[RMDB]
RNA sequence: GGGAACGACUCGAGUAGAGUCGAAAAUGUGGAAGUCCUGCUCGGGGCGGAAGCAUUAAAACCAUUCGAGCUAGUCAAUGCGUGGCGUGUCUUUCCGCAGCGUGUUGGCGAAUGUAAAGAGUGACUAUUGACCACGCAACGUUCGCGUUGCGUGGAAGAGUCUAAAUUGGUUCGCCAAUUUAGACUCAAAAGAAACAACAACAACAAC
Reactivity to DMS in 0.01 (KOAc 150mM, MgCl2 10mM, bicine 150mM(pH8.5), 24C), signal-to-noise 2, nucleotides 027 to 156: u000g000u000g010g010a300a300g010u000c020c000u000g020c220u020c120g000g000g050g010c020g000g030a300a300g000c000a080u000u030a040a110a070a100c000c010a080u000u000c020g000a090g020c030u040a200g050u010c030a000a040u000g000c010g040u000g020g010c060g020u000g060u000c100u000u000u000c100c030g000c010a070g020c000g030u020g040u010u000g010g030c000g000a050a040u000g000u000a000a070a150g000a140g030u010g020a150c100u000a120u000u040g000a160c000c000a020c000g000c000a010a020c030g010u000u010c300g040c060g060u000u000g000c000g050u000g010g010a000a060
Reactivity to 2A3 in 0.01 (KOAc 150mM, MgCl2 10mM, bicine 150mM(pH8.5), 24C), signal-to-noise 5, nucleotides 027 to 156: u010g010u010g010g020a040a030g010u010c000c010u060g100c110u070c090g000g000g010g000c020g010g000a010a010g000c010a000u060u140a020a030a000a050c060c020a030u080u140c060g030a040g030c010u060a010g010u000c000a010a020u020g010c010g010u020g080g000c010g010u110g080u050c100u060u120u040c020c010g010c010a040g000c010g000u020g000u010u000g000g000c010g000a000a010u080g050u110a040a090a040g060a020g040u100g030a020c070u090a120u210u210g080a060c000c000a010c010g000c010a000a000c010g030u080u080c210g010c000g070u000u000g000c000g000u000g000g000a000a000